Chemical mapping of a 177-nucleotide RNA with DMS. Reactivities are given for positions 27 through 126. DMS adducts were read by reverse transcription with MarathonRT.
RNA sequence: GGGAACGACUCGAGUAGAGUCGAAAAAUCGGUGAUUUUGAUAACCUUCACGUCACUGCCACAACGAAAGAGGAAGCAGUUCACCGCGCCAGUGAGGUUUUGUUGCGUACACUGGCCAUUGCAGCACCGCGUGCCAAUACUUCGGUAUUGGCACGCGAAAAGAAACAACAACAACAAC
Reactivity to DMS in 0.01 (KOAc 150mM, MgCl2 10mM, bicine 150mM(pH8.5), 24C), signal-to-noise 1, nucleotides 027 to 126: a070u020c030g030g000u050g020a050u000u000u000u010g010a090u010a070a090c080c010u000u010c090a190c200g020u000c050a060c040u020g000c040c080a060c070a090a030c010g000a060a050a090g000a060g010g030a110a140g000c080a030g000u000u010c030a060c030c070g010c300g020c030c010a000g010u000g010a120g010g000u000u020u000u000g010u010u000g000c020g010u000a080c020a040c010u000g010g010c020c040a020u020u020g030c050a080g010c060a170c130
Conditions: 150 mM KOAc, 10 mM MgCl2 and 150 mM bicine (pH 8.5), 24 C.